[RMDB]
RNA sequence: GGGAACGACUCGAGUAGAGUCGAAAAGCCCAGCGUUGGAACACAGCCCCACGUCGGGGCCUGGCCAAUUACAUAAGGCGGGCAAUGGCCAAUGGUGUUAAAUCAACCAGGGAGUUCUGUCAGUUAGCGUCAUGUAUCAAUUCGUUGAUACAUGACGAAAAGAAACAACAACAACAAC
Reactivity to DMS in 0.01 (KOAc 150mM, MgCl2 10mM, bicine 150mM(pH8.5), 24C), signal-to-noise 5, nucleotides 027 to 126: g020c000c000c010a110g030c200g010u010u000g010g010a070a050c020a070c100a250g000c020c010c000c010a120c300g010u000c180g020g010g000g010c020c050u010g010g010c010c020a040a140u010u010a060c130a090u010a100a050g020g010c040g010g000g000c060a070a040u000g000g000c000c010a040a110u010g000g010u000g010u000u000a050a100a110u010c070a040a040c020c020a130g010g000g010a150g010u000u000c030u000g010u000c040a070g010u000u010a100g020
Reactivity to 2A3 in 0.01 (KOAc 150mM, MgCl2 10mM, bicine 150mM(pH8.5), 24C), signal-to-noise 3, nucleotides 027 to 126: g000c000c000c010a030g040c110g050u030u060g020g040a040a010c030a000c000a050g020c030c000c000c000a100c080g300u200c090g050g000g000g000c000c010u000g040g000c010c000a040a060u140u050a040c040a060u190a120a030g060g000c040g010g010g000c050a040a130u040g000g000c030c000a060a070u100g090g000u020g020u040u110a110a170a180u050c010a030a020c020c010a010g030g010g030a110g020u050u030c010u040g100u100c040a150g060u100u160a070g080
Structure probing data (DMS and 2A3) for a 177-nucleotide construct.